[RMDB]
RNA sequence: GGGAACGACUCGAGUAGAGUCGAAAACAAAGCUGUGGCGGAUUGUAUUCGCACUUCUCUCGGCCCUCGAGGCAUGGAUAAGAUGAUUAUUGAACCUCGCGGUGAGGUAAUCAUCAGUAACGAUGGUGGUCACUAUUACUUUCGAGUAAUAGUGACCAAAAGAAACAACAACAACAAC
Reactivity to DMS in 0.01 (KOAc 150mM, MgCl2 10mM, bicine 150mM(pH8.5), 24C), signal-to-noise 2, nucleotides 027 to 126: c160a090a070a080g000c010u000g020u020g010g000c100g040g000a000u010u000g030u080a300u000u000c040g000c040a030c010u000u040c060u010c050u000c070g000g030c040c020c010u040c020g000a000g010g000c110a020u030g030g020a110u010a070a000g000a000u010g000a010u000u000a010u030u000g000a300a000c010c000u030c300g020c300g000g020u000g000a300g000g000u010a000a000u020c000a000u000c000a050g000u010a000a100c060g000a060u040g000g060u000
Reactivity to 2A3 in 0.01 (KOAc 150mM, MgCl2 10mM, bicine 150mM(pH8.5), 24C), signal-to-noise 5, nucleotides 027 to 126: c060a010a130a030g040c030u030g040u100g290g050c020g000g030a040u060u150g150u290a150u020u040c010g000c000a010c000u030u000c030u020c010u000c020g030g000c000c020c000u070c020g020a090g000g000c050a070u120g080g080a100u050a180a080g000a010u020g000a000u000u010a000u010u030g020a010a000c000c000u080c120g070c130g020g010u020g020a020g000g000u000a000a000u000c000a000u000c000a000g030u050a050a030c110g050a040u140g070g120u050

This 177-nucleotide RNA was probed chemically with DMS and 2A3. It was measured as part of the RMDB library OK1LIB. The reactions ran in a buffer of 150 mM KOAc, 10 mM MgCl2 and 150 mM bicine (pH 8.5), at 24 C. For DMS the reverse transcriptase was MarathonRT. The 2A3 profile rests on 4,018 reads.